RNA sequence: GGGAACGACUCGAGUAGAGUCGAAAAGCCUUGGAUGUGACUUCCCAAAAAGCAAUCGUGGAUCUCAUUUUGCGACUCGUCGCCGAACGCGGCACCGGAUUGCUAUUUAUCACCCACGACCUAGGUCGGCACUGAUCAAGUUCGCUUGAUCAGUGCCAAAAGAAACAACAACAACAAC
Reactivity to DMS in 0.01 (KOAc 150mM, MgCl2 10mM, bicine 150mM(pH8.5), 24C), signal-to-noise 1, nucleotides 027 to 126: g040c000c020u010u010g000g010a060u000g010u010g030a070c040u000u000c020c010c010a060a040a020a080a030g010c010a040a030u000c000g020u000g000g010a110u000c030u030c020a060u000u010u000u000g010c020g000a020c050u000c300g000u000c040g060c000c040g000a050a030c040g030c130g020g020c120a100c000c020g000g000a020u010u000g020c020u000a090u000u010u000a080u010c080a110c030c030c020a100c080g000a100c060c060u010a150g020g020u000c110
Reactivity to 2A3 in 0.01 (KOAc 150mM, MgCl2 10mM, bicine 150mM(pH8.5), 24C), signal-to-noise 1, nucleotides 027 to 126: g000c000c000u000u040g090g040a110u150g010u020g080a060c040u050u000c000c000c000a010a050a000a040a000g020c040a030a030u030c020g110u180g070g040a110u040c020u020c080a080u050u060u060u030g000c030g010a000c010u010c160g090u020c020g000c010c050g030a070a010c040g000c050g070g060c040a060c000c020g000g000a040u020u010g000c040u000a070u010u090u010a060u050c020a020c000c010c010a020c030g060a020c000c050u050a040g040g080u050c060